[RMDB]
RNA sequence: GGGAACGACUCGAGUAGAGUCGAAAAAACUCGUCGCCACAGUCACAGAACAGCCGCCGAGACGCUUUCUCUCCGCAGUUAGGACAGUAGACGUGGUCGUCGGCGACGUGUUCACCACACUGUCCGCGAGUCAUGGAGGAUUCGUCCUCCAUGACUCAAAAGAAACAACAACAACAAC
Reactivity to 2A3 in 0.01 (KOAc 150mM, MgCl2 10mM, bicine 150mM(pH8.5), 24C), signal-to-noise 1, nucleotides 027 to 126: a000a000c000u000c020g000u010c040g030c000c010a070c030a040g000u010c020a050c000a100g110a180a030c020a030g080c000c010g040c000c020g040a030g010a040c060g060c120u070u160u070c040u000c000u020c030c030g000c020a050g030u100u130a060g050g070a060c040a040g120u130a050g030a050c120g010u050g000g000u020c040g020u030c090g000g010c000g000a040c010g000u000g030u000u030c020a050c030c000a030c030a020c000u050g030u040c010c010g010c050
Reactivity to DMS in 0.01 (KOAc 150mM, MgCl2 10mM, bicine 150mM(pH8.5), 24C), signal-to-noise 2, nucleotides 027 to 126: a090a050c020u000c000g000u010c010g060c030c030a120c150a060g020u000c080a090c090a090g000a070a070c080a070g000c010c040g010c020c130g010a110g020a010c190g020c140u000u000u000c050u000c030u000c040c110g000c140a120g000u000u000a070g020g000a050c100a030g050u000a020g010a060c250g000u000g010g010u000c090g020u000c070g010g010c020g020a000c000g000u000g000u000u000c000a160c060c030a100c120a080c040u010g000u000c040c030g010c220